[RMDB]
RNA sequence: GGGAACGACUCGAGUAGAGUCGAAAAAUCUUGUGGGCUGAAUAAAUAUCUCGUGCAGGACUGUGCAACAGUAGCCCAGAGCAUCCUGCCUGUGGGCAUCCACCUCCCAGGUGAGGGCAGUGGGAAGCGAAAAGGAUAUAUUCGUAUAUCCUUUUCGAAAAGAAACAACAACAACAAC
Reactivity to DMS in 0.01 (KOAc 150mM, MgCl2 10mM, bicine 150mM(pH8.5), 24C), signal-to-noise 9, nucleotides 027 to 126: a060u000c030u000u000g020u000g010g010g020c030u000g000a080a090u010a070a090a120u010a090u010c040u000c110g020u000g000c040a050g010g010a070c090u000g010u010g020c080a070a070c080a070g010u000a080g010c010c010c010a060g000a080g010c180a120u000c030c020u000g010c020c030u000g010u000g010g000g010c080a090u000c060c030a050c040c040u000c010c010c020a140g010g010u000g010a080g010g000g010c040a050g010u000g010g000g010a090a120g010
Reactivity to 2A3 in 0.01 (KOAc 150mM, MgCl2 10mM, bicine 150mM(pH8.5), 24C), signal-to-noise 8, nucleotides 027 to 126: a000u060c040u070u120g040u080g060g010g000c030u040g080a090a070u170a170a130a040u170a100u070c060u030c070g060u080g020c020a020g020g090a090c060u100g020u050g090c040a120a060c020a110g080u100a030g020c000c000c000a010g000a000g000c010a060u050c010c010u010g020c000c010u070g010u120g040g020g000c020a060u050c010c000a020c000c010u020c010c000c000a010g000g030u080g060a100g000g020g000c010a010g010u060g040g030g020a050a010g080